RNA sequence: GGGAACGACUCGAGUAGAGUCGAAAAGAGGCCGGGCAUGGUAGCUCAUGCCUGUAAUCUCAGCACUUUGGAGGCUGAGGCAUGAGGAUCAGUUGAGGCCAGGAGUUUGAGACCAGCCUGGAUAACAUAGUGAGACCCCAUUCAACAACAACAACAACACCGAUUUAAAUUUCGAUUUAAAUCGGUGAAAAGAAACAACAACAACAAC
Reactivity to 2A3 in 0.01 (KOAc 150mM, MgCl2 10mM, bicine 150mM(pH8.5), 24C), signal-to-noise 3, nucleotides 027 to 156: g060a050g030g000c030c030g000g000g020c030a100u060g010g040u090a090g040c020u040c050a010u050g000c000c020u000g070u030a050a090u030c000u000c020a010g040c010a030c110u160u130u200g200g000a060g070g000c000u010g030a020g010g000c030a010u060g020a020g070g010a030u060c020a070g040u070u060g060a060g000g050c000c000a020g000g010a010g020u070u150u170g050a050g020a020c010c010a030g000c000c010u010g000g020a030u040a100a020c040a100u080a060g050u060g030a040g020a040c000c000c000c030a050u120u300c050a020a040c010a010a010c000a000a010c010a010a020c020a020a020
Reactivity to DMS in 0.01 (KOAc 150mM, MgCl2 10mM, bicine 150mM(pH8.5), 24C), signal-to-noise 2, nucleotides 027 to 156: g000a140g020g010c060c070g040g040g000c020a070u000g000g020u010a110g000c110u000c000a030u000g020c070c030u000g000u000a080a080u000c010u010c000a090g020c040a090c080u000u010u000g000g010a180g020g030c020u000g010a030g010g040c040a050u020g010a090g010g000a070u010c030a110g000u000u000g000a080g030g000c040c040a060g020g000a090g000u030u010u000g000a150g000a070c020c010a130g000c020c010u000g010g010a060u000a060a100c070a120u000a070g010u010g020a140g020a100c010c020c010c000a140u000u000c040a080a030c010a040a080c070a070a060c110a040a070c020a070a280

Background:
An RNA of 207 nucleotides, treated with 2A3 and DMS and read out base by base. The 2A3 profile rests on 1,962 reads. It was measured as part of the RMDB library OK3TST. 2A3 adducts were read by reverse transcription with SuperScript II with manganese.